Structure probing data (2A3) for a 207-nucleotide construct. The data come from the RNA Mapping Database (RMDB), library M2RFOK. Reactivities are given for positions 27 through 156.

[RMDB]
RNA sequence: GGGAACGACUCGAGUAGAGUCGAAAAAUCAGAGGGCGCUAUCAUGCAAACUAGGAUUGUCUGCUCAUGCACAUAACCAACUACCGAUAACUAACAGUGCAUGAAGGUUAGUUAUUCCAUAUUAAUUAAAACUCGUAAUUCUUCGGAAUUACGAGAAGGAAUCCAUGAGGUUCGCCUCAUGGAUUCCAAAAGAAACAACAACAACAAC
Reactivity to 2A3 in 0.01 (KOAc 150mM, MgCl2 10mM, bicine 150mM(pH8.5), 24C), signal-to-noise 1, nucleotides 027 to 156: a000u060c060a060g030a050g010g090g000c020g030c080u100a040u300c020a020u140g000c010a000a030a030c010u010a010g040g020a030u000u050g030u010c050u050g080c010u010c000a000u030g070c000a010c010a070u110a150a110c060c040a110a070c100u150a050c050c060g050a020u000a040a010c000u000a000a050c000a030g010u000g010c000a010u010g010a060a020g010g000u000u040a000g000u000u000a020u100u000c030c000a120u140a190u300u200a130a040u150u130a020a110a050a040c000u000c000g000u000a000a020u000u000c010u000u020c120g090g000a000a000u000u010a000c000g000a000g000a000a000